[RMDB]
RNA sequence: GGGAACGACUCGAGUAGAGUCGAAAAAGGCGAUUUGGGAUAUUUAACUGCUGGUAAUUACUAUGCAACAAGAGUGCCGGAUUUACCAGGUAGCGUUGAAAGUUAUGAGGGUUAUUUAUCGGUAUUCUCCCAAUUUACGGUUCGCCGUAAAUUGGGAAAAAGAAACAACAACAACAAC
Reactivity to DMS in 0.01 (KOAc 150mM, MgCl2 10mM, bicine 150mM(pH8.5), 24C), signal-to-noise 1, nucleotides 027 to 126: a070g020g020c110g020a060u010u000u000g020g000g000a100u000a010u010u000u000a080a090c060u000g010c010u010g010g020u000a080a030u000u010a130c010u000a030u040g000c030a050a030c150a090a120g000a090g020u000g010c040c180g010g000a060u020u000u000a040c000c040a050g000g020u000a020g010c020g000u000u000g000a160a080a070g000u000u010a030u000g000a240g010g000g020u000u000a050u000u000u000a070u000c020g010g000u000a010u000u000c050
Source: RMDB library OK2TRN, as collected in RNAgym. This 177-nucleotide RNA was probed chemically with DMS. For DMS the reverse transcriptase was MarathonRT.